[RMDB]
RNA sequence: GGGAACGACUCGAGUAGAGUCGAAAACUUUAUUAUCCAUGAUGCAAAGCCUCGAGAACAGCUUUCGCUCAGUGCUGGAACUCUCGCACGCAGCGCAUCCAGGCACUGCAGAAGUCGCAGCGGCGAGCAUAUUAGUCCGCUUCGGCGGACUAAUAUGAAAAGAAACAACAACAACAAC
Reactivity to DMS in 0.01 (KOAc 150mM, MgCl2 10mM, bicine 150mM(pH8.5), 24C), signal-to-noise 4, nucleotides 027 to 126: c030u010u020u030a050u010u030a110u010c060c040a100u020g020a030u000g010c020a040a160a100g000c010c050u000c130g010a140g030a120a070c220a140g000c010u000u020u000c100g010c020u020c030a050g010u000g010c010u010g000g000a080a120c170u040c020u000c020g000c030a080c070g020c040a080g010c140g000c110a050u010c030c050a050g000g020c000a040c030u010g000c090a080g020a050a080g040u020c020g020c010a090g010c030g000g000c030g000a040g000
Reactivity to 2A3 in 0.01 (KOAc 150mM, MgCl2 10mM, bicine 150mM(pH8.5), 24C), signal-to-noise 8, nucleotides 027 to 126: c010u080u200u090a110u130u100a090u150c070c040a090u130g040a040u110g050c040a040a020a010g010c010c020u150c120g110a120g040a150a070c030a030g020c010u020u060u090c070g040c020u040c030a050g010u030g050c010u020g010g070a090a100c040u010c010u010c070g010c020a160c070g020c020a030g000c000g000c040a020u000c000c000a010g090g010c010a010c060u040g000c030a040g050a200a030g100u200c040g000c020a020g010c010g020g010c020g000a000g010